[RMDB]
RNA sequence: GGGAACGACUCGAGUAGAGUCGAAAAUCACUGGACUUCGGUCCAGUGAAAAAGAAAGACGGACGGCGAACGUCAAACGCUGACGUACGAAAGUACGAAAAUAAAGUACGCCCUUCGGGGCGUACAACUCACUUAAGAGGUUCGCCUCUUAAGUGAGAAAAGAAACAACAACAACAAC
Reactivity to DMS in 0.01 (KOAc 150mM, MgCl2 10mM, bicine 150mM(pH8.5), 24C), signal-to-noise 4, nucleotides 027 to 126: u010c000a000c000u010g000g000a020c000u000u010c210g010g010u000c000c010a010g010u010g010a000a050a060a090a120g010a070a100a110g020a270c040g010g000a040c050g010g000c020g000a050a030c030g000u000c180a040a060a100c040g020c060u000g030a300c020g040u000a010c000g010a100a080a160g000u000a000c020g010a120a080a050a060u000a060a110a140g000u000a000c000g000c000c010c000u000u000c180g020g010g010g000c000g020u010a000c000a050a080
Reactivity to 2A3 in 0.01 (KOAc 150mM, MgCl2 10mM, bicine 150mM(pH8.5), 24C), signal-to-noise 2, nucleotides 027 to 126: u030c000a010c000u010g000g010a000c000u030u040c220g050g010u000c000c000a000g000u000g000a000a000a000a000a010g060a010a050a000g080a020c030g030g010a020c020g020g050c030g020a130a020c020g090u100c060a070a080a010c030g000c050u040g080a060c000g000u000a010c010g020a110a010a020g010u020a010c020g040a040a040a030a020u160a010a080a000g000u000a000c010g000c000c000c000u010u060c180g010g010g000g000c000g000u000a000c000a000a000
Annotation
This 177-nucleotide RNA was probed chemically with DMS and 2A3. For 2A3, 5,381 sequencing reads were counted. The DMS profile rests on 3,056 reads. 2A3 adducts were read by reverse transcription with SuperScript II with manganese. It was measured as part of the RMDB library M2PK50. Conditions: 150 mM KOAc, 10 mM MgCl2 and 150 mM bicine (pH 8.5), 24 C.